The record gives the reactivity of an RNA of 177 nucleotides to DMS and 2A3. 2A3 adducts were read by reverse transcription with SuperScript II with manganese.

RNA sequence: GGGAACGACUCGAGUAGAGUCGAAAAGAAAAUACGUGUACGAUUUGCAGUGCAUUCUUUGAGUACACGGAAAGAAAACUAGAGGACGAAAAGAGAAAAACUGUGAAUCGGAAAACUCUAGGAAAAAGGCUAAGUUAAUCUUCGGAUUAACUUAGCCAAAAGAAACAACAACAACAAC
Reactivity to DMS in 0.01 (KOAc 150mM, MgCl2 10mM, bicine 150mM(pH8.5), 24C), signal-to-noise 1, nucleotides 027 to 126: g010a120a100a070a010u000a080c000g050u000g010u010a020c000g000a080u010u000u000g000c000a060g040u020g010c230a030u050u020c010u000u000u070g000a300g000u000a010c000a010c000g000g000a050a080a140g020a100a080a110a010c000u020a000g010a010g040g010a020c020g000a070a010a000a010g000a000g010a080a120a080a110a070c090u020g000u000g000a020a020u000c000g000g000a110a100a150a140c000u010c000u040a000g000g000a020a070a100a090a170
Reactivity to 2A3 in 0.01 (KOAc 150mM, MgCl2 10mM, bicine 150mM(pH8.5), 24C), signal-to-noise 1, nucleotides 027 to 126: g070a000a080a010a020u140a000c000g000u000g000u000a000c000g000a120u000u020u010g070c040a030g010u030g070c070a040u050u010c040u030u010u040g010a010g020u010a010c000a020c000g020g010a030a020a000g030a020a030a000a000c000u000a020g000a010g000g080a010c010g010a010a000a060a000g040a000g050a000a090a050a050a040c010u010g010u000g080a050a000u020c020g000g010a030a080a030a040c000u000c000u000a000g020g070a030a020a020a020a020